Background
An RNA of 177 nucleotides, treated with DMS and 2A3 and read out base by base. For 2A3, 23,320 sequencing reads were counted. The data come from the RNA Mapping Database (RMDB), library OK2TRN.
[RMDB]
RNA sequence: GGGAACGACUCGAGUAGAGUCGAAAAACGGAACAGGAGCAGGAGGCCCAGGGCGAGGAUCAGUGCGAUGCGCGUUCAAUGGCCAGCGUCAGCACAAUGCCCACUCCGAUGCCGCUGAUGCAGCAUAAAUAAUAGGCAUAUUCGUAUGCCUAUUAUUAAAAGAAACAACAACAACAAC
Reactivity to DMS in 0.01 (KOAc 150mM, MgCl2 10mM, bicine 150mM(pH8.5), 24C), signal-to-noise 9, nucleotides 027 to 126: a090c090g010g000a080a080c100a120g010g010a080g020c070a130g000g010a090g010g010c040c060c090a140g010g010g010c030g010a100g000g010a060u000c140a140g010u000g010c030g010a060u000g010c030g010c140g010u000u000c140a080a110u010g010g010c030c080a180g010c020g020u000c040a090g020c020a040c050a060a100u010g010c010c010c020a130c070u000c020c020g000a100u010g000c030c040g010c020u000g000a100u010g010c030a060g000c060a080u000a050
Reactivity to 2A3 in 0.01 (KOAc 150mM, MgCl2 10mM, bicine 150mM(pH8.5), 24C), signal-to-noise 9, nucleotides 027 to 126: a000c050g020g020a060a020c030a090g030g020a050g040c030a030g020g100a030g040g020c030c020c040a020g010g010g000c030g030a070g070g050a080u120c080a050g040u020g050c020g020a030u060g020c030g000c020g050u100u110c120a170a150u220g090g010c020c010a010g000c010g030u020c030a030g000c010a010c020a030a060u120g010c010c000c010a020c010u010c010c010g010a020u060g010c010c020g000c020u050g030a060u140g020c030a030g000c020a050u090a170
High 2A3 reactivity points to a flexible backbone, as in loops and unpaired stretches.